[RMDB]
This 177-nucleotide RNA was probed chemically with DMS. The reactions ran in a buffer of 150 mM KOAc, 10 mM MgCl2 and 150 mM bicine (pH 8.5), at 24 C. Values cover nucleotides 27 to 126. Source: RMDB library TTRINS, as collected in RNAgym.

RNA sequence: GGGAACGACUCGAGUAGAGUCGAAAAGAUAUGGACGAGAACCAGUCCAGGAAUAAGUGGGAGACUAAGCUCGGAAACGAGCUAGUCGAAGAACACUCAUUCCUGGACUGGUUCUCGUCCUAAGUCACAUACACUUAACGUUCGCGUUAAGUGUAUGAAAAGAAACAACAACAACAAC
Reactivity to DMS in 0.01 (KOAc 150mM, MgCl2 10mM, bicine 150mM(pH8.5), 24C), signal-to-noise 3, nucleotides 027 to 126: g010a040u000a300u000g000g000a000c000g000a010g010a020a010c000c000a010g030u000c010c000a000g000g030a040a010u000a020a010g020u000g000g000g010a160g010a030c000u010a070a120g010c000u010c000g000g010a120a130a300c010g000a020g020c000u000a000g010u000c010g010a100a100g020a140a200c000a000c000u010c040a010u000u000c000c000u000g000g000a000c000u000g000g000u000u000c000u010c010g000u000c000c000u000a000a070g000u000c040a240